[RMDB]
RNA sequence: GGGAACGACUCGAGUAGAGUCGAAAACAGUCAGUCAUUCAGUGAUUGAUCCAAAAUUAUUUACUGAGUGCCUACCUACUCUGCGCCAGGCUCUCUAGCCUCUCACUACUGAGUUAGGGUGCAGGCACAACGUCCACCUAUUCGUAGGUGGACGUUGAAAAGAAACAACAACAACAAC
Reactivity to 2A3 in 0.01 (KOAc 150mM, MgCl2 10mM, bicine 150mM(pH8.5), 24C), signal-to-noise 1, nucleotides 027 to 126: c020a020g130u130c000a000g010u000c010a010u040u040c010a000g040u020g010a030u050u080g020a040u080c090c060a050a120a030a020u060u030a050u040u070u050a020c040u040g020a020g000u020g000c000c010u040a040c020c010u050a060c030u000c000u050g010c020g030c010c000a050g080g000c000u010c010u000c040u070a020g030c000c030u060c010u020c040a070c040u120a010c010u080g040a030g030u010u070a160g040g000g050u010g040c020a010g000g010c000a010
Reactivity to DMS in 0.01 (KOAc 150mM, MgCl2 10mM, bicine 150mM(pH8.5), 24C), signal-to-noise 2, nucleotides 027 to 126: c260a210g000u000c150a020g030u000c000a000u000u000c010a010g020u000g020a000u000u000g040a020u000c090c300a040a090a060a090u020u000a040u010u000u000a040c060u000g000a040g020u000g000c090c020u000a080c080c090u000a060c100u000c040u000g000c030g020c010c010a170g000g010c000u000c090u000c100u000a010g020c040c090u000c130u000c170a190c050u000a070c090u020g000a030g000u000u000a060g020g000g020u000g010c030a010g030g020c300a090

Structure probing data (2A3 and DMS) for a 177-nucleotide construct. Reactivities are rounded to 0.1 and cut off at 0 and 3. For DMS the reverse transcriptase was MarathonRT. Source: RMDB library OK2TST, as collected in RNAgym. The RNA was probed in 150 mM KOAc, 10 mM MgCl2 and 150 mM bicine (pH 8.5) at 24 C. The 2A3 profile rests on 1,844 reads.